[RMDB]
RNA sequence: GGGAACGACUCGAGUAGAGUCGAAAAAAAGAAAAGUAAGACCAAGCUCAGUGUGCCAUUUCCUUGUCUGUAGCCAUGUCUAUGGGCUCUUGAGUUGGCCAUCUGAGCGAGGGCCUGCUGCGACAUAGGUGAAAUAUACGUUCGCGUAUAUUUCACCAAAAGAAACAACAACAACAAC
Reactivity to DMS in 0.01 (KOAc 150mM, MgCl2 10mM, bicine 150mM(pH8.5), 24C), signal-to-noise 2, nucleotides 027 to 126: a100a030a060g000a060a060a040a030g010u010a040a090g000a170c000c000a080a300g000c000u000c000a020g050u000g010u000g000c000c000a050u000u010u000c040c260u000u000g010u010c000u000g030u000a040g020c060c200a080u010g040u010c030u070a030u000g000g000g030c010u030c150u000u020g010a060g000u010u020g000g000c010c010a010u000c050u020g000a030g010c000g000a170g000g010g020c000c020u010g000c020u000g000c030g000a080c090a100u030a120
Reactivity to 2A3 in 0.01 (KOAc 150mM, MgCl2 10mM, bicine 150mM(pH8.5), 24C), signal-to-noise 1, nucleotides 027 to 126: a000a000a000g100a000a090a000a000g020u100a050a010g010a020c010c000a000a010g020c010u010c020a010g050u010g150u260g060c000c010a030u080u030u070c020c000u030u020g020u050c000u000g000u000a010g000c020c240a300u170g070u050c020u000a010u030g020g000g000c020u050c050u110u170g010a010g000u020u000g000g000c010c000a070u050c040u020g000a000g020c000g000a000g010g010g000c020c000u060g010c000u030g000c010g030a050c050a080u240a120